[RMDB]
RNA sequence: GGGAACGACUCGAGUAGAGUCGAAAAGCUCGGAGACGAGCAAGGCUGACAAAACCGUGUCCCAACCUCCACGUGGUGUCGGCUGGAUAAUGCUGCAUUAUGUUGCAUUUAUCAACUGGGAAUCAAACAUUAUCCGGCCUUUCGAGGCCGGAUAAUGAAAAGAAACAACAACAACAAC
Reactivity to 2A3 in 0.01 (KOAc 150mM, MgCl2 10mM, bicine 150mM(pH8.5), 24C), signal-to-noise 4, nucleotides 027 to 126: g000c010u000c000g030g020a080g020a070c040g010a020g000c000a000a040g050g000c000u000g000a000c020a010a110a000a050c180c000g060u060g050u040c000c000c000a030a080c040c050u080c020c020a050c070g080u130g020g030u030g010u050c010g020g020c010u030g050g000a010u010a030a000u030g000c030u040g000c010a080u140u130a130u300g010u000u030g000c000a020u080u080u130a030u030c020a030a050c080u070g100g030g020a040a070u130c050a060a000a000
Reactivity to DMS in 0.01 (KOAc 150mM, MgCl2 10mM, bicine 150mM(pH8.5), 24C), signal-to-noise 2, nucleotides 027 to 126: g030c000u000c000g000g030a230g020a110c020g050a020g020c000a160a030g000g030c020u000g000a070c000a050a000a080a120c000c070g060u000g000u000c030c010c040a080a220c060c070u060c160c100a120c060g020u030g060g000u070g000u000c040g030g000c070u020g050g010a020u000a000a020u000g010c020u000g060c060a150u010u020a060u080g020u000u000g060c000a000u000u020u000a060u000c000a100a060c030u030g000g020g000a110a090u020c070a070a010a250